[RMDB]
RNA sequence: GGGAACGACUCGAGUAGAGUCGAAAACGUGACCGGUACGCCGGUCACGAAGUGACGGUGAAAAAUGGCCAAGGUGCCAGCUACCACCGACACAGGGCGCAAAGCACUCGAUUACGAUCGAGUGCAACGGAGUAUCGGCUUUCGAGCCGAUACUCCGAAAAGAAACAACAACAACAAC
Reactivity to 2A3 in 0.01 (KOAc 150mM, MgCl2 10mM, bicine 150mM(pH8.5), 24C), signal-to-noise 1, nucleotides 027 to 126: c010g010u000g040a000c000c000g000g000u070a120c300g070c020c000g000g000u050c000a020c000g000a010a000g010u000g010a010c000g020g000u030g030a000a190a000a000a000u070g000g000c050c080a230a220g240g030u300g160c000c000a010g000c000u050a090c040c040a000c000c000g000a000c000a000c000a010g060g130g010c120g000c030a050a230a150g000c010a000c000u000c000g000a030u020u030a080c140g070a000u000c010g000a000g030u010g000c000a000a000
An RNA of 177 nucleotides, treated with 2A3 and read out base by base.
It was measured as part of the RMDB library OK1LIB.
The RNA was probed in 150 mM KOAc, 10 mM MgCl2 and 150 mM bicine (pH 8.5) at 24 C.
For 2A3, 704 sequencing reads were counted.
For 2A3 the reverse transcriptase was SuperScript II with manganese.